[RMDB]
RNA sequence: GGGAACGACUCGAGUAGAGUCGAAAAUGUAACUUGGGCUGUAAAGCAAACUGGGGCUGUGUUUUCGAUGAUGAUGAUGAUCAUGAUGAUGAUCAUCAUGAUCAUGAUGAUGAUCAUCAUGAUCAUGAUGAUGAUUUUAACAGUUUUACUUCUGGCCCCAUGCAGCGUAGUUCGCUACGCUGCAUGGAAAAGAAACAACAACAACAAC
Reactivity to 2A3 in 0.01 (KOAc 150mM, MgCl2 10mM, bicine 150mM(pH8.5), 24C), signal-to-noise 3, nucleotides 027 to 156: u140g020u050a050a040c050u130u120g020g040g000c030u040g050u150a060a060a060g040c090a080a050a020c030u040g000g030g060g000c040u020g000u020g070u030u070u030u130c100g030a050u080g010a020u040g020a010u020g000a010u030g050a000u020c030a020u040g050a070u050g000a000u030g020a000u000c000a000u000c000a010u020g020a030u060c020a000u000g000a010u010g020a010u050g040a050u230c000a010u010c000a000u010g000a000u010c000a000u000g000a000u000g000a000u000g030a020u040u030u020u100a080a030c020a020g010u010u060u040u100a070c030u020u040c030u070g040g010c020c030
Reactivity to DMS in 0.01 (KOAc 150mM, MgCl2 10mM, bicine 150mM(pH8.5), 24C), signal-to-noise 1, nucleotides 027 to 156: u010g020u000a020a090c030u010u020g020g010g040c010u010g000u000a030a050a100g010c010a100a040a070c070u000g010g000g030g020c010u000g010u010g010u020u000u000u010c110g020a060u010g010a030u000g030a090u000g020a040u010g010a060u010c030a070u000g000a100u010g000a040u000g020a040u000c000a030u000c030a000u000g010a110u000c100a040u010g000a020u000g000a170u010g010a140u000c000a020u000c000a010u010g000a000u000c000a010u000g010a020u000g010a030u000g000a090u000u000u000u000a060a130c050a040g010u010u000u000u000a070c050u010u000c030u010g000g010c030c040